[RMDB]
RNA sequence: GGGAACGACUCGAGUAGAGUCGAAAAGAUAUGGAUCGUUCAUGCCUCGAGGAUCAUGCAUCGGAAACGAUGCAUGGGAGAGGGUGACUGCGAUCCUAAGUCAAACUGCUGUCUUCGGACAGCAGAAGUGUCUUAUAGGGUUCGCCCUAUAAGACACAAAAGAAACAACAACAACAAC
Reactivity to DMS in 0.01 (KOAc 150mM, MgCl2 10mM, bicine 150mM(pH8.5), 24C), signal-to-noise 4, nucleotides 027 to 126: g000a020u000a070u010g000g000a010u000c010g020u000u010c020a020u000g020c000c010u000c000g010a090g020g000a040u000c000a000u000g000c000a000u000c000g010g000a020a030a070c010g030a020u000g010c000a000u000g000g000g010a010g020a010g010g010g020u010g000a080c300u020g010c040g000a020u010c000c000u000a010a120g000u010c000a130a110a300c000u000g000c000u000g000u000c010u000u020c230g010g010a010c000a010g010c000a000g010a030a100
Reactivity to 2A3 in 0.01 (KOAc 150mM, MgCl2 10mM, bicine 150mM(pH8.5), 24C), signal-to-noise 5, nucleotides 027 to 126: g000a000u010a010u050g010g010a000u000c020g090u190u080c070a060u300g300c000c000u030c020g080a300g010g000a010u000c000a010u010g000c000a010u000c000g010g000a000a010a000c000g000a010u020g010c000a010u000g000g010g000a020g000a010g010g020g030u030g030a050c190u160g060c040g010a010u010c000c000u000a020a000g000u000c030a080a070a140c010u020g000c000u000g000u000c010u020u080c300g200g000a000c000a000g000c000a000g000a010a010